[RMDB]
RNA sequence: GGGAACGACUCGAGUAGAGUCGAAAACAUAAGCACGGCUCCCACGGCCGUCUCGAUGGCCCGCCGGGCGUCCUCGAUCACCCCGGAAGCCGCAUCCGCGUCUUGGGGGUCCACGUUAAAGACACCCAAUAGAUAGGCCUUUCGAGGCCUAUCUAUUAAAAGAAACAACAACAACAAC
Reactivity to 2A3 in 0.01 (KOAc 150mM, MgCl2 10mM, bicine 150mM(pH8.5), 24C), signal-to-noise 4, nucleotides 027 to 126: c010a040u140a140a000g070c090a020c080g020g000c000u070c020c040c000a010c030g020g000c000c020g050u040c030u060c040g170a120u080g010g010c000c000c040g060c010c050g000g020g030c100g040u100c010c060u080c040g110a220u090c040a080c000c000c020c000g050g060a000a010g030c030c000g030c060a070u080c050c060g040c040g000u010c010u050u040g010g000g000g000g040u000c000c010a080c060g050u040u080a150a070a000g010a000c010a040c060c000c000
Reactivity to DMS in 0.01 (KOAc 150mM, MgCl2 10mM, bicine 150mM(pH8.5), 24C), signal-to-noise 3, nucleotides 027 to 126: c180a080u030a080a060g000c130a140c170g010g020c020u010c020c060c040a090c140g050g020c000c010g000u000c040u000c100g030a070u000g000g000c010c000c100g030c100c110g020g000g040c180g000u000c060c050u020c060g000a040u080c110a130c090c000c020c010g000g030a300a060g010c040c000g000c050a160u050c120c160g020c070g020u010c020u010u000g000g000g000g000g000u010c030c120a070c130g010u020u040a060a040a090g000a090c140a040c000c000c000